[RMDB]
RNA sequence: GGGAACGACUCGAGUAGAGUCGAAAACUAAUGAGUAAGGAAAAUAACGAUCUGGGUGACGCCAGAUCCCACGAUCAGUUUUCGUGAAGAAUUUUUGACGGGACCAGAGGCUACCCGUAGGUGACCCAAAUUUGAAGGUAUUCGUACCUUCAAAUUUAAAAGAAACAACAACAACAAC
Reactivity to DMS in 0.01 (KOAc 150mM, MgCl2 10mM, bicine 150mM(pH8.5), 24C), signal-to-noise 9, nucleotides 027 to 126: c020u010a110a060u020g010a090g010u010a100a060g010g000a030a030a040a030u020a090a150c170g000a010u000c010u000g000g000g010u000g010a150c290g000c110c120a060g000a100u000c000c060c020a020c140g010a030u000c090a120g000u000u010u000u000c010g010u010g000a120a140g020a070a040u010u000u010u020u020g000a050c030g010g000g010a090c050c060a110g000a090g010g000c090u010a060c020c000c020g010u000a040g000g020u010g000a110c010c020c030
Reactivity to 2A3 in 0.01 (KOAc 150mM, MgCl2 10mM, bicine 150mM(pH8.5), 24C), signal-to-noise 9, nucleotides 027 to 126: c030u060a060a080u120g080a030g100u100a080a100g090g050a080a080a060a080u150a080a080c080g000a010u000c010u010g000g000g020u050g060a030c050g040c060c000a010g010a020u010c000c000c000a050c050g020a040u060c080a080g060u040u050u040u030c190g070u070g030a060a080g040a090a110u060u070u070u120u160g050a020c010g000g000g010a010c010c030a070g040a040g170g010c030u060a070c000c000c000g010u010a040g000g070u050g030a070c010c000c000
Chemical mapping of a 177-nucleotide RNA with DMS and 2A3. DMS adducts were read by reverse transcription with MarathonRT.